[RMDB]
The record gives the reactivity of an RNA of 177 nucleotides to 2A3. It was measured as part of the RMDB library OK1LIB. The 2A3 profile rests on 436 reads. Values are in units of 0.01, from 0 to 300, in steps of 10. 2A3 adducts were read by reverse transcription with SuperScript II with manganese.
RNA sequence: GGGAACGACUCGAGUAGAGUCGAAAAGAGUAAUGGGCGCCCAAGGUGAGAUGAAGCUGUAGUCUCACUGGAAGGACUAGAGGUUAGAGGAGACCCGCCCAAAACAAGCAACAGCUUCAUCAAGAGACGCGUAGUACUCGUUCGCGAGUACUACGCGAAAAGAAACAACAACAACAAC
Reactivity to 2A3 in 0.01 (KOAc 150mM, MgCl2 10mM, bicine 150mM(pH8.5), 24C), signal-to-noise 1, nucleotides 027 to 126: g200a010g000u300a110a260u060g000g000g000c030g000c000c000c000a000a020g000g000u000g000a050g000a000u000g020a010a130g000c030u000g000u130a020g030u000c030u000c000a000c000u000g000g000a040a000g000g100a000c150u120a060g020a110g000g000u090u090a060g070a170g300g000a000g050a040c000c000c000g000c000c000c000a000a080a000a020c040a000a000g180c080a030a120c060a000g000c000u230u210c020a060u030c000a000a090g010a000g000a120